[RMDB]
RNA sequence: GGGAACGACUCGAGUAGAGUCGAAAAUGAAGGAUGAGGUGGUGGCUGAGCUGAAGGCAGAGCUGCUGCCUCUCCUGCGCGCUGAGCUGGCCAAGGACACGCAGACCAGAGCCGCCUCCAACGAUGACUUUAACCGUUCGUUCGCGAACGGUUAAAGAAAAGAAACAACAACAACAAC
Reactivity to DMS in 0.01 (KOAc 150mM, MgCl2 10mM, bicine 150mM(pH8.5), 24C), signal-to-noise 1, nucleotides 027 to 126: u000g000a160a030g000g020a030u020g020a010g000g020u000g000g060u000g010g000c000u000g000a300g030c010u010g010a080a110g020g010c000a080g020a090g010c000u000g010c000u030g000c000c000u000c020u000c000c010u000g000c110g020c110g050c000u000g000a100g000c030u010g000g000c030c060a060a120g000g000a070c110a080c100g010c060a070g000a110c020c020a110g000a070g020c000c060g000c030c040u000c030c010a040a020c120g010a080u010g000a100
Reactivity to 2A3 in 0.01 (KOAc 150mM, MgCl2 10mM, bicine 150mM(pH8.5), 24C), signal-to-noise 1, nucleotides 027 to 126: u090g050a040a030g020g000a010u120g010a050g000g040u040g000g030u030g020g030c030u000g050a050g000c000u140g140a210a070g120g060c020a000g000a030g150c020u050g010c010u010g000c000c000u000c000u010c000c000u020g050c010g000c050g000c000u090g030a010g040c040u080g040g000c010c030a150a120g110g020a070c050a010c150g000c070a040g000a080c000c030a020g010a010g070c020c020g000c010c010u050c020c000a050a010c060g100a090u100g040a020
Source information:
Source: RMDB library OK2TRN, as collected in RNAgym. Structure probing data (DMS and 2A3) for a 177-nucleotide construct. For 2A3, 1,023 sequencing reads were counted. Values cover nucleotides 27 to 126. For DMS the reverse transcriptase was MarathonRT.